RNA sequence: GGGAACGACUCGAGUAGAGUCGAAAACAUAAGCAACAAAGCUGCAUCAUUAGGCCUGGUAAUGUGGCUCAUGCCUGUGAUCCUAGCCCAUUGGGAGGUCAACGCAGGAGGAUCGCUUGAGGCCAGGAUCGAAACGACAGUUCGCUGUCGUUUCGAUAAAAGAAACAACAACAACAAC
Reactivity to 2A3 in 0.01 (KOAc 150mM, MgCl2 10mM, bicine 150mM(pH8.5), 24C), signal-to-noise 1, nucleotides 027 to 126: c010a060u120a070a000g030c060a010a150c020a100a120a000g030c000u010g000c000a000u050c010a040u140u230a050g000g070c000c020u000g000g030u010a020a030u070g030u040g010g000c000u010c020a020u090g060c000c000u020g040u010g060a140u000c010c030u050a130g170c000c000c060a150u230u260g000g000g000a050g030g000u090c110a060a060c060g030c020a010g000g010a000g020g030a040u070c050g000c000u000u040g010a030g070g000c000c020a000g030g010
Reactivity to DMS in 0.01 (KOAc 150mM, MgCl2 10mM, bicine 150mM(pH8.5), 24C), signal-to-noise 2, nucleotides 027 to 126: c050a080u000a050a050g000c030a060a060c080a060a150a220g010c000u000g020c010a010u000c160a120u000u000a070g010g010c000c010u000g000g000u000a020a070u010g020u000g010g010c010u000c150a150u010g000c000c000u000g010u000g000a070u000c030c000u000a190g000c010c000c090a220u000u040g000g000g000a040g010g010u000c040a060a090c080g000c050a050g010g010a040g010g000a180u010c090g000c010u020u000g000a300g010g010c000c030a010g010g000
The record gives the reactivity of an RNA of 177 nucleotides to 2A3 and DMS.
DMS adducts were read by reverse transcription with MarathonRT.
As a SHAPE reagent, 2A3 marks flexible, mostly unpaired nucleotides at the ribose 2'-OH.
It was measured as part of the RMDB library OK2TRN.